[RMDB]
The record gives the reactivity of an RNA of 177 nucleotides to DMS and 2A3. Values cover nucleotides 27 to 126.
RNA sequence: GGGAACGACUCGAGUAGAGUCGAAAACGUCUGUUACAGUUUUGGAAGAUCAAUAUUACUCGCCUUUUACUCUUCUUUCGUUUUGAAGGAAAUAUGAGUGAAAUCAGAAGGACAAUCGUCGUUUUGAUCUCAUAGGCUUGUUCGCAAGCCUAUGAGAAAAAGAAACAACAACAACAAC
Reactivity to DMS in 0.01 (KOAc 150mM, MgCl2 10mM, bicine 150mM(pH8.5), 24C), signal-to-noise 2, nucleotides 027 to 126: c130g010u030c130u000g020u010u000a050c100a180g010u000u000u020u000g000g010a090a090g040a060u010c110a040a100u040a080u000u050a060c060u010c020g050c090c090u000u000u000u000a030c030u000c050u000u000c020u000u000u000c010g010u000u020u090u080g020a000a030g020g000a000a010a070u030a080u040g010a010g000u020g000a000a040a050u050c130a070g020a140a030g010g000a020c130a080a090u000c140g010u000c090g010u010u000u000u000g000a030
Reactivity to 2A3 in 0.01 (KOAc 150mM, MgCl2 10mM, bicine 150mM(pH8.5), 24C), signal-to-noise 4, nucleotides 027 to 126: c010g060u030c080u090g090u080u090a070c050a090g020u020u000u100u180g030g030a060a020g000a130u080c030a040a080u120a060u220u060a120c010u020c050g070c020c000u060u050u000u070a010c000u000c010u080u000c000u000u020u010c040g210u120u090u200u300g020a040a000g060g100a030a040a000u280a100u120g020a020g000u040g010a050a020a020u130c060a050g080a110a030g050g000a020c040a040a130u130c090g070u010c000g000u070u000u000u000g010a000